[RMDB]
Chemical mapping of a 207-nucleotide RNA with 2A3 and DMS. For DMS the reverse transcriptase was MarathonRT. Source: RMDB library M2RFPK, as collected in RNAgym. In probing experiments dimethyl sulfate is read out at A N1 and C N3, which are open when not base-paired.
RNA sequence: GGGAACGACUCGAGUAGAGUCGAAAAAUACAAGGGGAGGUUUCGGCCAAAUGUUGUAUGCAGAACGCGUGAGGAAGGUAGCACUUAGACACUCACGAGUAGCGGUUCGGCAGUAGUGCUAAAAUGAGACAGUACGAAAAGUUCGCUUUUCGUACAACAUUAUUACGCUGUUCGCAGCGUAAUAAUGAAAAGAAACAACAACAACAAC
Reactivity to 2A3 in 0.01 (KOAc 150mM, MgCl2 10mM, bicine 150mM(pH8.5), 24C), signal-to-noise 8, nucleotides 027 to 156: a000u150a020c050a030a040g020g010g000g020a030g000g040u010u040u100c070g050g000c030c010a060a090a080u120g010u040u020g030u060a050u090g010c030a010g040a110a020c020g010c010g040u010g020a010g040g040a080a050g050g010u060a020g030c020a010c050u040u070a040g030a060c030a010c070u020c010a010c030g010a020g020u070a030g040c060g040g000u070u050c030g040g000c010a020g030u130a000g010u020g020c020u050a040a040a030a070u120g000a030g020a040c080a070g010u000a000c000g010a000a000a000a000g020u050u100c160g060c080u010u000u000u000c000g000u000a000c000a000a000
Reactivity to DMS in 0.01 (KOAc 150mM, MgCl2 10mM, bicine 150mM(pH8.5), 24C), signal-to-noise 5, nucleotides 027 to 156: a080u000a060c050a080a080g010g000g000g010a100g010g020u000u000u010c040g020g020c040c030a070a080a100u000g020u000u000g010u000a090u000g030c010a100g000a070a050c020g020c030g000u000g000a060g020g010a110a070g020g010u000a080g010c040a120c050u000u010a140g000a140c060a110c010u000c020a050c010g010a060g030u000a090g010c020g010g000u010u000c030g020g010c030a110g010u000a040g010u000g000c000u000a040a050a060a100u000g010a180g020a120c080a100g010u000a010c000g010a000a020a010a020g020u000u000c300g030c020u000u000u000u000c000g000u000a010c000a040a090
For 2A3, 12,044 sequencing reads were counted. The reactions ran in a buffer of 150 mM KOAc, 10 mM MgCl2 and 150 mM bicine (pH 8.5), at 24 C. 2A3 adducts were read by reverse transcription with SuperScript II with manganese.